[RMDB]
RNA sequence: GGGAACGACUCGAGUAGAGUCGAAAAAACCGGGCUUGGUGGCACACGCCUAUAAUCCCAGCUACUUGGGAGGCUGAGGCAUGAGAAUCACUUGAACCUAGGAGGCAGAGGUUGCCGUGAGCUGGGAUCACACCACUGUACUCCAGCCUGGGCAACACUCUGUGCCGUAUUUCGAUACGGCACAGAGAAAAGAAACAACAACAACAAC
Reactivity to 2A3 in 0.01 (KOAc 150mM, MgCl2 10mM, bicine 150mM(pH8.5), 24C), signal-to-noise 2, nucleotides 027 to 156: a000a040c020c020g010g010g010c060u080u080g040g000u030g030g020c020a030c000a010c120g030c000c000u060a080u060a050a010u020c010c000c000a010g010c090u190a090c060u150u040g020g010g000a040g030g000c080u100g040a030g000g020c020a050u040g040a050g030a100a040u080c030a040c040u060u060g060a070a040c000c010u010a070g010g010a030g010g000c050a010g020a070g080g000u050u080g070c050c040g080u040g010a030g010c020u030g040g030g010a080u040c010a030c000a000c040c010a010c080u030g020u050a140c000u010c040c000a000g050c000c000u020g040g000g000c000a020a010c020a040
Reactivity to DMS in 0.01 (KOAc 150mM, MgCl2 10mM, bicine 150mM(pH8.5), 24C), signal-to-noise 1, nucleotides 027 to 156: a100a020c010c010g020g020g000c030u010u000g040g000u010g000g000c090a100c040a050c100g010c060c020u000a100u010a060a170u000c010c000c010a010g030c090u000a050c180u010u040g020g000g030a060g030g000c090u000g000a080g100g010c020a100u020g000a180g010a100a070u020c060a050c020u000u010g010a040a060c030c020u020a050g020g010a100g020g020c010a060g020a030g050g020u000u010g010c040c030g030u000g010a060g040c010u000g000g010g020a050u000c050a100c100a100c120c050a060c110u010g030u000a030c030u000c020c000a050g020c010c000u010g070g010g000c020a080a050c060a100

Notes
Chemical mapping of a 207-nucleotide RNA with 2A3 and DMS. For 2A3, 1,026 sequencing reads were counted. The data come from the RNA Mapping Database (RMDB), library OK3TST. The reactions ran in a buffer of 150 mM KOAc, 10 mM MgCl2 and 150 mM bicine (pH 8.5), at 24 C. 2A3 adducts were read by reverse transcription with SuperScript II with manganese. Values cover nucleotides 27 to 156.